[RMDB]
RNA sequence: GGGAACGACUCGAGUAGAGUCGAAAAUUGUGAAGAAUUUUAUUACUGCCAAUCCGGCAUGGAGUAAGGCAGUCUUUAUUUCGCCUUACAAUUCACAGAAUGCUGUGUCUCGUUCAAUGCUGGGUCUCGACAGUCUACUUCGGUAGACUGAAAAGAAACAACAACAACAAC
Reactivity to 2A3 in 0.01 (KOAc 150mM, MgCl2 10mM, bicine 150mM(pH8.5), 24C), signal-to-noise 7, nucleotides 027 to 129: u080u030g030u090g030a050a050g030a070a030u020u070u050u070a110u050u190a100c060u030g090c040c020a020a050u000c020c000g060g030c100a100u130g060g000a090g050u110a080a050g020g010c060a000g030u040c020u060u180u080a160u010u130u070c020g010c030c000u000u000a010c000a000a000u010u010c000a020c010a010g140a290a170u230g140c010u000g030u000g010u050c020u040c060g150u250u090c070a060a010u040g000c000u040g020g000g020u000c020u000c010g020a010
Reactivity to DMS in 0.01 (KOAc 150mM, MgCl2 10mM, bicine 150mM(pH8.5), 24C), signal-to-noise 5, nucleotides 027 to 129: u020u020g030u030g000a000a000g030a080a040u020u030u040u040a060u000u000a100c020u040g000c060c060a100a150u000c060c030g030g040c100a060u050g030g010a070g040u020a070a080g000g000c030a090g030u040c100u020u010u020a050u030u040u030c110g030c000c040u040u030a000c020a090a050u000u040c040a050c050a050g030a110a050u060g030c000u040g000u040g020u070c040u000c090g030u000u000c100a000a000u000g020c030u030g000g000g000u030c000u000c060g000a300